[RMDB]
RNA sequence: GGGAACGACUCGAGUAGAGUCGAAAAAGCAGCCGCGUGACGGCGUUAUCUAAAUCCAGCCGUCAGGCAUUGCAAUCAAUGAUGUUGGGGCUGGGCGCAUUGUUGGUUAUAGAUGGUGCUAUUACUGCAUGGGUGAGUGAUUCGUCACUCACCCAUGAAAAGAAACAACAACAACAAC
Reactivity to 2A3 in 0.01 (KOAc 150mM, MgCl2 10mM, bicine 150mM(pH8.5), 24C), signal-to-noise 1, nucleotides 027 to 126: a020g080c040a010g030c030c080g030c060g060u080g000a000c010g020g020c030g000u030u060a090u040c150u120a110a060a080u060c060c050a020g000c000c000g020u050c020a000g050g000c010a020u000u140g020c050a010a010u060c000a030a090u100g060a040u080g030u110u110g030g000g000g000c030u050g070g000g000c000g010c000a010u050u080g010u020u030g070g050u060u100a100u080a110g060a070u090g000g050u040g030c020u060a040u140u130a080c060u030g050
Reactivity to DMS in 0.01 (KOAc 150mM, MgCl2 10mM, bicine 150mM(pH8.5), 24C), signal-to-noise 3, nucleotides 027 to 126: a090g000c050a080g020c090c070g000c040g010u010g010a030c010g030g000c010g020u000u000a050u000c160u020a070a070a120u020c100c090a150g000c000c000g000u000c010a080g010g020c010a090u000u000g010c110a080a110u010c060a050a050u000g000a050u010g000u000u010g020g020g000g010c020u000g010g010g020c070g000c080a070u000u010g020u010u000g010g000u010u000a090u000a120g010a070u000g020g020u000g000c030u000a060u020u000a080c100u010g000